[RMDB]
RNA sequence: GGGAACGACUCGAGUAGAGUCGAAAAAUUGGUGAACCGCUCACCGAAUACAAUUUCAAAGAUAAUGUUGUAUUUGGAAAAUAUGAUUUUGAAACUGUAAUGUAUGCAUUAUUAAAACUGGAAGAAGAUCUGUGUACUAGUUCGCUAGUACACAGAUAAAAGAAACAACAACAACAAC
Reactivity to 2A3 in 0.01 (KOAc 150mM, MgCl2 10mM, bicine 150mM(pH8.5), 24C), signal-to-noise 2, nucleotides 027 to 126: a000u060u090g020g000u020g030a070a090c080c060g040c100u050c020a020c010c000g020a020a020u040a010c010a010a030u000u050u170c090a150a080a000g060a130u170a200a070u270g030u060u020g010u010a000u000u030u110g040g020a110a040a040a010u100a060u010g080a080u040u080u120u020g050a090a070a030c020u010g010u060a010a110u090g090u090a050u090g030c020a030u040u060a050u090u200a220a120a060a120c050u030g130g020a060a060g030a080a000g040
Reactivity to DMS in 0.01 (KOAc 150mM, MgCl2 10mM, bicine 150mM(pH8.5), 24C), signal-to-noise 3, nucleotides 027 to 126: a130u020u010g000g020u000g000a060a140c120c090g000c210u000c040a070c020c000g010a110a140u000a020c010a020a040u000u000u000c050a020a040a070g020a150u000a080a050u000g000u000u010g020u000a040u000u000u000g010g010a080a100a050a020u000a020u000g000a050u000u000u000u000g000a060a030a030c080u000g010u010a020a080u000g000u000a040u030g000c060a040u000u020a070u010u010a030a040a080a080c140u010g010g010a110a100g000a090a100g010
Record summary
An RNA of 177 nucleotides, treated with 2A3 and DMS and read out base by base. For DMS, 2,636 sequencing reads were counted. For 2A3, 1,295 sequencing reads were counted. Reactivities are given for positions 27 through 126.